This 177-nucleotide RNA was probed chemically with 2A3 and DMS. The RNA was probed in 150 mM KOAc, 10 mM MgCl2 and 150 mM bicine (pH 8.5) at 24 C. For DMS the reverse transcriptase was MarathonRT. The data come from the RNA Mapping Database (RMDB), libraries RFM100 and RFMREP. Values cover nucleotides 27 to 126.
RNA sequence: GGGAACGACUCGAGUAGAGUCGAAAACGAAGCGGCGGGAUGAUUCAAAUCAUCGGUAGGGGAGCGUCCCAGCGGGGGCGAAGCGGGAGGGGAACCGACCGUGGACCUUCUGGGAGCGAGAAUGCUGUAUACUCUUGGAAUUCGUUCCAAGAGUAUAAAAAGAAACAACAACAACAAC
Reactivity to 2A3 in 0.01 (KOAc 150mM, MgCl2 10mM, bicine 150mM(pH8.5), 24C), signal-to-noise 9, nucleotides 027 to 126: c040g040a050a000g020c020g090g010c070g030g030g010a030u070g020a020u100u190c120a110a140a160u060c030a020u050c030g030g020u100a050g010g010g000g000a060g040c020g080u060c000c000c000a010g030c070g010g010g010g020g120c050g020a030a010g010c030g010g000g010a060g000g000g000g020a010a030c000c000g040a030c000c000g000u030g000g020a050c010c000u030u020c010u030g020g010g010a040g030c010g000a030g070a070a050u130g020c010u010g030
Reactivity to DMS in 0.01 (KOAc 150mM, MgCl2 10mM, bicine 150mM(pH8.5), 24C), signal-to-noise 9, nucleotides 027 to 126: c090g010a160a150g010c070g010g010c090g010g000g000a040u010g000a040u010u020c240a100a130a100u010c020a020u010c030g010g020u020a110g010g000g010g000a130g010c050g000u010c010c000c010a070g010c140g000g010g000g000g010c120g000a070a110g010c040g000g000g010a280g000g000g010g030a070a110c010c010g000a130c020c010g000u000g000g000a060c040c020u000u010c010u000g000g000g010a210g010c030g000a120g010a070a060u020g020c040u020g010